[RMDB]
Notes:
Source: RMDB library M2PK90, as collected in RNAgym. The record gives the reactivity of an RNA of 177 nucleotides to DMS. Reactivities are given for positions 27 through 126. The DMS profile rests on 871 reads. The RNA was probed in 150 mM KOAc, 10 mM MgCl2 and 150 mM bicine (pH 8.5) at 24 C.
RNA sequence: GGGAACGACUCGAGUAGAGUCGAAAAGUACUAUGCCCGCCAUUAUUGAUGCAUGCUCCACCUCCCACUCCUUAAUAGUUGCUUUGAAGUUUCCUUUCGGUGGGUUGUGCAGCGUCUUUAUCAGAAAUUACACCCUCUGGUUCGCCAGAGGGUGUAAAAAAGAAACAACAACAACAAC
Reactivity to DMS in 0.01 (KOAc 150mM, MgCl2 10mM, bicine 150mM(pH8.5), 24C), signal-to-noise 1, nucleotides 027 to 126: g010u000a020c090u000a070u000g010c050c030c000g000c140c100a050u000u000a090u010u000g000a060u000g010c120a020u010g000c010u020c120c030a050c050c030u000c000c000c030a040c040u000c090c100u000u010a030a040u000a040g020u020u000g010c040u000u000u000g010a110a060g010u000u000u000c020c020u000u020u000c120g020g050u000g020g010g000u000u000g000u000g030c100a000g020c010g010u010c040u000u000u000a070u000c100a090g000a120a060a090